[RMDB]
RNA sequence: GGGAACGACUCGAGUAGAGUCGAAAACGAUGCGAAAAUAUCAAAAAACAAAUCGAAGACAGCACUUCUGACUACGAUAAAGAAAAACUCCAAGAACGUUUAGCAAAACUUUCUGGAGGCGUAGCUGUCUACGCCUGCUAUUCGUAGCAGGCGUAGAAAAAGAAACAACAACAACAAC
Reactivity to DMS in 0.01 (KOAc 150mM, MgCl2 10mM, bicine 150mM(pH8.5), 24C), signal-to-noise 2, nucleotides 027 to 126: c070g000a040u000g020c280g030a000a050a140a070u020a130u030c090a020a080a080a070a130a090c050a050a150a070u000c050g010a080a050g020a080c030a050g000c090a130c050u000u000c010u000g000a110c060u020a000c040g010a120u000a030a090a080g000a060a040a070a100a120c020u000c000c000a020a060g020a010a010c020g000u000u000u010a130g000c210a080a090a010a030c020u000u000u000c010u000g010g010a000g010g000c020g020u000a010g020c120u000g000
Reactivity to 2A3 in 0.01 (KOAc 150mM, MgCl2 10mM, bicine 150mM(pH8.5), 24C), signal-to-noise 2, nucleotides 027 to 126: c020g020a010u100g020c020g130a190a000a090a020u130a050u180c140a100a090a010a010a030a070c050a020a090a040u120c040g010a000a000g080a050c010a000g030c030a040c080u090u030c010u090g120a130c020u030a020c030g030a060u050a110a130a080g090a010a070a070a010a010c010u000c000c000a070a060g000a000a000c000g000u000u020u070a050g110c040a110a000a050a000c010u000u040u010c020u020g000g000a010g000g000c010g010u010a030g000c020u000g030
Overview: The record gives the reactivity of an RNA of 177 nucleotides to DMS and 2A3. DMS adducts were read by reverse transcription with MarathonRT. Conditions: 150 mM KOAc, 10 mM MgCl2 and 150 mM bicine (pH 8.5), 24 C. For 2A3, 1,377 sequencing reads were counted.